RNA sequence: GGGAACGACUCGAGUAGAGUCGAAAAAUAAAUUGUCAUAUCUGGAUCCAACAGUUAAACCAUGUGAUGGUGUAUACUGUGGUAUGGCGUAAAACAUCGGAGAAAGUACAAAAGUACAAAAUAAAAACUAUAAACUGCAGUUCGCUGCAGUUUAUAGAAAAGAAACAACAACAACAAC
Reactivity to DMS in 0.01 (KOAc 150mM, MgCl2 10mM, bicine 150mM(pH8.5), 24C), signal-to-noise 1, nucleotides 027 to 126: a060u020a080a050a140u000u000g030u000c010a010u000a000u000c010u010g060g010a120u000c000c010a150a090c000a010g000u000u000a160a230a000c000c070a010u000g010u010g010a050u000g000g000u000g040u000a050u000a000c000u000g000u000g010g010u000a010u000g000g010c010g020u010a040a100a060a100c160a060u000c050g000g040a170g010a050a070a120g000u000a000c020a110a060a170a090g000u000a010c000a070a010a080a060u000a040a100a100a060a120
Reactivity to 2A3 in 0.01 (KOAc 150mM, MgCl2 10mM, bicine 150mM(pH8.5), 24C), signal-to-noise 1, nucleotides 027 to 126: a010u260a020a010a040u050u050g010u040c000a000u030a030u030c030u090g250g050a030u040c010c010a010a000c000a030g000u050u000a020a000a000c010c010a020u060g080u080g300a180u040g050g000u030g050u030a030u000a030c020u010g010u030g020g010u000a000u010g000g000c010g000u060a080a040a010a080c110a050u040c040g070g010a010g020a140a190a000g050u030a030c030a030a300a020a070g010u010a010c020a030a230a150a000u170a060a050a000a010a000